[RMDB]
RNA sequence: GGGAACGACUCGAGUAGAGUCGAAAAACGAGAAGGUCGCGACCGGCGCGGACGCGAAGUUCGGGAUUCCCUACGAGCGCGUCCCCGAGGUCGCCGACCGCGUCCGCGAGGAGUUCGACCUGGUCGGACCCUGGUGGCAUUUCGAUGCCACCAGGGUAAAAGAAACAACAACAACAAC
Reactivity to 2A3 in 0.01 (KOAc 150mM, MgCl2 10mM, bicine 150mM(pH8.5), 24C), signal-to-noise 2, nucleotides 027 to 126: a000c090g000a080g080a130a150g010g000u000c000g000c000g040a010c000c000g220g040c030g000c020g000g010a000c020g000c030g070a030a040g030u080u060c010g000g000g050a180u130u260c040c000c000u030a030c040g020a020g040c000g000c040g020u030c000c010c010c000g020a020g020g020u020c000g000c000c000g020a000c000c000g000c000g030u000c020c010g020c030g040a030g060g030a110g020u050u050c060g010a050c010c020u120g020g100u020c000g010g020
Reactivity to DMS in 0.01 (KOAc 150mM, MgCl2 10mM, bicine 150mM(pH8.5), 24C), signal-to-noise 2, nucleotides 027 to 126: a090c050g000a130g020a110a130g000g000u000c000g030c150g000a030c000c010g000g000c040g070c300g020g000a000c000g000c080g000a140a100g020u040u020c100g020g000g000a230u000u080c080c010c000u000a070c080g070a060g000c030g010c040g010u000c000c000c000c050g010a120g000g000u000c020g000c100c030g000a010c000c040g000c070g000u000c010c030g020c140g030a110g000g020a230g020u000u000c000g000a030c000c100u000g000g010u000c000g000g000